[RMDB]
Overview:
This 207-nucleotide RNA was probed chemically with DMS and 2A3. Reactivities are given for positions 27 through 156.
RNA sequence: GGGAACGACUCGAGUAGAGUCGAAAAUCGCGUUGGCUGCCUAAUUCAAGGAAUUAGCGUGCCUUCAUGCUAAGGGUUUGAUAUCUGCUAAAACCCGGUGCAUUCACCAAUGCAGGUUAAGCCAAAGAAACGGCUCACGAAUUCGUUCGUGAGCCAACCAGUAACUUUGAUUCGUCAAAGUUACUGGAAAAGAAACAACAACAACAAC
Reactivity to DMS in 0.01 (KOAc 150mM, MgCl2 10mM, bicine 150mM(pH8.5), 24C), signal-to-noise 2, nucleotides 027 to 156: u010c070g030c060g040u000u000g010g000c030u000g000c140c000u000a030a040u000u010c020a180a150g040g000a080a060u000u000a040g000c110g050u000g000c060c030u000u000c040a090u010g000c020u000a250a170g000g020g040u000u000u010g000a140u010a050u000c040u010g030c030u010a090a070a020a050c000c000c000g010g060u000g010c020a080u000u000c030a060c060c020a130a250u000g000c000a040g030g000u000u000a090a060g020c010c010a060a070a160g010a060a110a150c150g020g000c000u000c000a000c020g010a050a070u000u010c260g010u000u000c030g060u000g010a020g010c000c000a000a000
Reactivity to 2A3 in 0.01 (KOAc 150mM, MgCl2 10mM, bicine 150mM(pH8.5), 24C), signal-to-noise 4, nucleotides 027 to 156: u100c020g000c030g030u010u010g020g000c040u070g050c020c030u020a020a020u060u050c130a230a150g180g030a080a030u020u020a020g010c050g070u010g000c000c000u030u010c060a050u080g010c020u040a040a060g010g000g010u010u000u020g030a040u030a040u090c040u040g010c010u050a030a030a020a030c030c020c000g000g010u020g010c020a090u070u180c040a040c060c050a050a080u120g000c010a010g030g000u060u160a090a050g010c030c050a090a060a020g100a060a130a030c130g010g000c000u000c000a000c000g000a010a020u060u060c170g050u090u000c000g000u080g070a000g000c000c000a000a000